Chemical mapping of a 177-nucleotide RNA with DMS and 2A3.
RNA sequence: GGGAACGACUCGAGUAGAGUCGAAAAGGGACGAGUUGGAUUUUUUCCGUGAGAACGGAAGGGGUCUAGCUCAAUGGCGUGUUGUUAGAAUUUCGGGGAGAGCUGAGUUCCGAAGAGUACGCCAUGACUACAGCUUAGUAUUCGUACUAGGUUGUAGAAAAGAAACAACAACAACAAC
Reactivity to DMS in 0.01 (KOAc 150mM, MgCl2 10mM, bicine 150mM(pH8.5), 24C), signal-to-noise 9, nucleotides 027 to 126: g010g010g010a130c180g010a010g020u000u000g010g010a000u000u000u000u000u000u000c000c000g010u000g000a270g000a220a010c000g000g000a010a010g000g000g000g000u000c000u000a010g010c000u000c000a100a030u000g000g010c010g020u000g010u000u000g000u000u000a120g000a060a050u000u010u000c020g010g000g000g000a160g000a170g010c050u000g000a060g000u000u000c010c030g010a040a060g000a070g010u000a010c010g010c000c000a020u000g000a270
Reactivity to 2A3 in 0.01 (KOAc 150mM, MgCl2 10mM, bicine 150mM(pH8.5), 24C), signal-to-noise 9, nucleotides 027 to 126: g080g010g060a040c070g000a030g010u010u010g020g000a010u020u000u000u000u000u000c000c000g000u010g030a080g020a040a000c000g000g000a000a000g010g010g000g000u000c010u010a000g000c000u000c010a020a020u010g000g000c010g000u020g010u020u050g090u020u040a040g020a090a060u080u090u070c010g000g000g010g010a210g010a030g050c080u060g010a020g040u060u000c010c000g010a030a010g020a010g030u020a000c000g000c000c000a010u040g030a010

It was measured as part of the RMDB library OK2TRN. The DMS profile rests on 120,347 reads.